[RMDB]
RNA sequence: GGGAACGACUCGAGUAGAGUCGAAAACGGUGGGUGUUCCCCUCCCGGAGAGGGCACGAGUGAGGCUCUUCGCCGGGGGAGCUCCCUCACGUCCCCACGUAGCGGAUCCCAGGACCCCCUUCCAAAACAAACUAACAGAGUUCGCUCUGUUAGUUUGAAAAGAAACAACAACAACAAC
Reactivity to 2A3 in 0.01 (KOAc 150mM, MgCl2 10mM, bicine 150mM(pH8.5), 24C), signal-to-noise 1, nucleotides 027 to 126: c030g010g030u010g000g000g020u020g000u000u000c030c000c000c010u060c030c020c010g000g000a050g020a000g000g020g000c050a060c150g140a170g200u280g070a270g020g010c000u000c000u150u100c140g000c120c030g100g000g030g010g000a000g000c000u000c000c030c000u000c030a290c030g050u040c020c020c000c020a030c090g060u070a010g060c040g030g070a080u020c000c030c030a080g040g100a170c000c000c000c000c110u080u000c060c000a020a020a050a060
Reactivity to DMS in 0.01 (KOAc 150mM, MgCl2 10mM, bicine 150mM(pH8.5), 24C), signal-to-noise 2, nucleotides 027 to 126: c040g000g010u000g000g000g010u000g000u000u010c020c020c020c070u010c060c140c010g000g000a080g030a020g000g000g000c030a080c030g010a190g010u040g000a150g000g000c000u000c000u000u000c040g020c040c080g000g020g020g000g010a040g000c020u000c020c010c000u000c000a060c010g010u010c060c000c020c040a120c170g000u000a070g010c080g010g000a140u000c000c010c020a140g000g000a250c020c000c000c020c010u000u000c030c030a100a090a110a180